Record summary:
This 207-nucleotide RNA was probed chemically with DMS and 2A3. Conditions: 150 mM KOAc, 10 mM MgCl2 and 150 mM bicine (pH 8.5), 24 C. For 2A3, 2,799 sequencing reads were counted.
RNA sequence: GGGAACGACUCGAGUAGAGUCGAAAAAGUGUAUGAAGUACGUAGAGUGUCGGCAAGCUCUAUAUAUGGACACUUACGAAGGGUUUUGGUUGUUUUGUAUCUCAAGCCGACUUUGACUAUUUGAGGAAAAAGACUUACGCCUUCGGGCGUAAGUCAAUCAGAUUAGAAUGUUCGCAUUCUAAUCUGAAAAAGAAACAACAACAACAAC
Reactivity to DMS in 0.01 (KOAc 150mM, MgCl2 10mM, bicine 150mM(pH8.5), 24C), signal-to-noise 2, nucleotides 027 to 156: a060g020u000g020u000a140u000g000a210a260g020u000a050c020g040u000a000g020a030g030u010g000u000c040g020g000c120a150a300g000c000u000c000u010a010u000a050u010a010u000g000g000a050c030a000c010u000u000a170c040g030a080a130g000g020g000u020u000u020u000g010g000u000u000g010u000u010u000u000g010u000a060u000c020u020c010a050a050g010c020c010g010a090c110u000u010u000g020a030c050u000a080u000u000u010g000a060g020g010a050a060a060a140a140g020a020c000u020u000a000c020g040c000c010u010u000c300g080g030g000c000g040u000a010a000g020u000c000a000a030
Reactivity to 2A3 in 0.01 (KOAc 150mM, MgCl2 10mM, bicine 150mM(pH8.5), 24C), signal-to-noise 4, nucleotides 027 to 156: a000g050u040g000u020a140u090g040a020a010g030u020a000c030g000u000a010g010a000g010u050g040u060c050g020g050c060a170a080g000c020u000c010u030a030u010a010u010a000u060g040g030a000c010a010c020u040u090a030c090g080a090a080g080g040g000u040u080u160u150g060g000u000u010g020u000u020u010u020g030u040a100u030c000u000c030a010a010g020c000c000g010a020c030u170u180u180g030a030c040u040a100u150u080u070g040a040g000g020a040a040a020a050a030g000a000c000u000u000a000c000g000c000c000u010u020c100g070g000g000c000g010u000a000a000g000u000c000a000a000